[RMDB]
RNA sequence: GGGAACGACUCGAGUAGAGUCGAAAAACCGGCGGUAAAUCAACUCAGUUGAAAGCCGCGAGCGCUUUGCGUGCGAACUCAAAGGACAGCAGAUCCGGUGUAAUUCCGGGGCCGACGGUUAGAGUCCAAAAGAGGUUAUCGUUCGCGAUAACCUCAACAAUAUACACUACUUCGGUAGUGUAUAUUGAAAAGAAACAACAACAACAAC
Reactivity to 2A3 in 0.01 (KOAc 150mM, MgCl2 10mM, bicine 150mM(pH8.5), 24C), signal-to-noise 3, nucleotides 027 to 156: a010c000c000g010g000c010g010g000u080a170a140a180u100c040a040a040c050u100c300a130g020u020u040g050a110a070a020g060c030c010g020c020g020a030g020c050g000c030u090u040u100g030c030g020u070g050c020g040a100a040c000u020c030a050a030a010g050g030a090c030a070g000c020a030g060a140u030c000c000g010g020u010g010u050a030a090u080u020c010c000g020g000g000g000c020c010g020a030c010g010g010u020u020a050g020a050g130u020c000c010a020a080a030a100g010a000g000g020u000u000a000u000c000g030u030u070c180g020c000g090a000u000a000a000c000c000u000c000a000a010
Reactivity to DMS in 0.01 (KOAc 150mM, MgCl2 10mM, bicine 150mM(pH8.5), 24C), signal-to-noise 2, nucleotides 027 to 156: a100c000c010g000g000c000g020g030u000a030a090a140u000c040a080a070c010u000c070a230g030u000u010g010a080a080a270g020c020c020g010c080g010a070g020c070g020c090u000u000u020g000c040g010u000g040c090g030a070a060c030u020c040a130a110a110g020g030a150c040a080g020c040a090g000a100u020c000c010g020g040u000g000u030a120a300u000u000c030c000g010g030g010g020c010c010g030a030c020g000g010u000u000a130g020a140g010u010c040c030a030a060a100a190g000a010g030g030u000u000a010u000c000g020u000u000c270g020c020g000a020u000a000a020c000c000u010c000a000a060